[RMDB]
RNA sequence: GGGAACGACUCGAGUAGAGUCGAAAAACCUUUGUGGAUUCUCUAGCGUGUGGCUUGGACCAUACAGUAACAAGGUGGCCCAUUGGGCCACCCGCCCUGUAUGCUAGCCAUCGGGAUCCACUCUGGUAAAACGUUUUAUGGUUCGCCAUAAAACGAACAAAUUAGCUAGGUUCGCCUAGCUAAUUUGAAAAGAAACAACAACAACAAC
Reactivity to 2A3 in 0.01 (KOAc 150mM, MgCl2 10mM, bicine 150mM(pH8.5), 24C), signal-to-noise 3, nucleotides 027 to 156: a000c010c000u020u010u020g000u010g000g040a030u250u000c070u040c100u220a120g130c090g140u230g020u020g100g010c020u100u190g080g040a090c110c000a010u010a000c000a010g060u140a110a170c090a140a040g020g000u010g030g020c060c020c150a300u180u300g010g020g000c010c000a000c010c010c000g020c010c030c000u010g000u000a000u000g020c010u010a000g000c010c000a010u030c010g010g010g010a000u010c000c010a000c000u000c010u000g000g000u030a100a100a020a020c000g000u000u000u050u000a010u000g020g000u040u040c170g080c090c000a000u000a000a010a000a000c000g020a060a000
Reactivity to DMS in 0.01 (KOAc 150mM, MgCl2 10mM, bicine 150mM(pH8.5), 24C), signal-to-noise 1, nucleotides 027 to 156: a080c000c000u000u010u010g020u010g030g000a060u000u010c000u000c030u000a140g010c130g000u020g010u000g040g000c000u000u010g010g000a090c300c000a020u000a040c020a030g010u000a110a110c070a140a060g000g090u010g100g020c000c020c010a300u000u020g140g050g000c000c010a000c010c020c030g050c300c220c010u020g000u010a030u000g020c000u010a040g010c020c020a010u000c000g020g000g000a030u020c000c000a020c000u000c070u000g020g000u000a080a060a090a160c010g020u000u010u000u000a000u000g000g000u010u010c300g060c020c000a020u000a010a010a000a010c000g010a100a200
This 207-nucleotide RNA was probed chemically with 2A3 and DMS.
For DMS, 2,208 sequencing reads were counted.
The reactions ran in a buffer of 150 mM KOAc, 10 mM MgCl2 and 150 mM bicine (pH 8.5), at 24 C.
For DMS the reverse transcriptase was MarathonRT.
Values cover nucleotides 27 to 156.
The data come from the RNA Mapping Database (RMDB), library RNAMAK.